[RMDB]
RNA sequence: GGGAACGACUCGAGUAGAGUCGAAAAUCCUAACGCUUCGGCGUUAGGAAAAGUUAAUUGGCAGAUUAACAUGUUAGAAUUAGAAUGUAACUAGUCUAAAAAAAACUGCGUGGUUCGCCACGCAGAAGACAAGUAUUAGCUUCGGCUAAUACUUGUCAAAAGAAACAACAACAACAAC
Reactivity to 2A3 in 0.01 (KOAc 150mM, MgCl2 10mM, bicine 150mM(pH8.5), 24C), signal-to-noise 1, nucleotides 027 to 126: u020c010c010u000a000a000c000g000c010u020u030c160g130g000c000g000u000u000a000g000g000a000a040a000a040g000u010u020a030a020u040u030g180g030c050a010g040a050u010u000a020a010c020a040u070g050u120u080a060g030a150a030u050u010a020g080a160a110u190g050u130a080a060c010u010a040g030u050c010u090a050a050a030a000a020a020a000a070c000u000g020c010g000u000g000g020u050u050c190g020c060c000a000c000g000c000a000g000a000a000
Reactivity to DMS in 0.01 (KOAc 150mM, MgCl2 10mM, bicine 150mM(pH8.5), 24C), signal-to-noise 2, nucleotides 027 to 126: u000c000c000u000a020a020c000g010c000u000u020c230g000g000c000g000u000u000a000g010g000a000a010a050a120g000u000u000a000a030u000u000g010g020c230a070g010a080u000u000a020a010c010a140u000g000u010u000a040g000a090a080u000u010a010g010a110a100u020g010u020a080a090c050u000a040g010u000c020u000a010a000a010a040a090a030a100a170c000u010g000c010g000u010g000g000u010u020c230g010c000c000a010c010g000c010a000g000a030a040

The data come from the RNA Mapping Database (RMDB), library M2PK50. The record gives the reactivity of an RNA of 177 nucleotides to 2A3 and DMS. For 2A3, 2,961 sequencing reads were counted. The reactions ran in a buffer of 150 mM KOAc, 10 mM MgCl2 and 150 mM bicine (pH 8.5), at 24 C.